[RMDB]
RNA sequence: GGGAACGACUCGAGUAGAGUCGAAAAGAUAUGGAAAGGUCAAUGCCCCAGACAGCCAGGUCGGAAACGACCUGGUCGAGGAACUACAUUCGACCUUUCCUAAGUCAAAGGAGCCUUCGGGCUCCAAGUGGUUAAAAUGGUUCGCCAUUUUAACCACAAAAGAAACAACAACAACAAC
Reactivity to DMS in 0.01 (KOAc 150mM, MgCl2 10mM, bicine 150mM(pH8.5), 24C), signal-to-noise 3, nucleotides 027 to 126: g010a040u000a300u000g030g000a000a000a000g020g010u000c020a010a000u010g020c150c140c010c020a090g010a160c300a070g010c000c000a000g000g000u010c020g020g000a080a040a260c020g000a010c000c000u000g000g000u000c010g000a300g000g000a050a020c090u020a150c020a020u000u000c170g010a000c010c000u000u000u000c000c010u000a010a110g000u000c030a060a110a140g000g010a000g000c000c000u000u020c110g040g000g050c010u000c000c000a000a040
Reactivity to 2A3 in 0.01 (KOAc 150mM, MgCl2 10mM, bicine 150mM(pH8.5), 24C), signal-to-noise 2, nucleotides 027 to 126: g010a010u030a030u150g000g000a020a000a000g010g010u000c010a030a000u080g050c000c060c010c000a070g100a150c030a000g030c000c000a000g000g010u000c000g000g030a050a020a070c000g000a010c000c010u010g000g000u010c000g020a060g020g060a080a060c120u150a030c260a020u040u090c110g000a000c000c030u020u010u010c000c000u020a030a020g010u010c020a000a130a100g000g000a010g000c010c000u040u050c300g140g020g000c040u000c000c000a010a000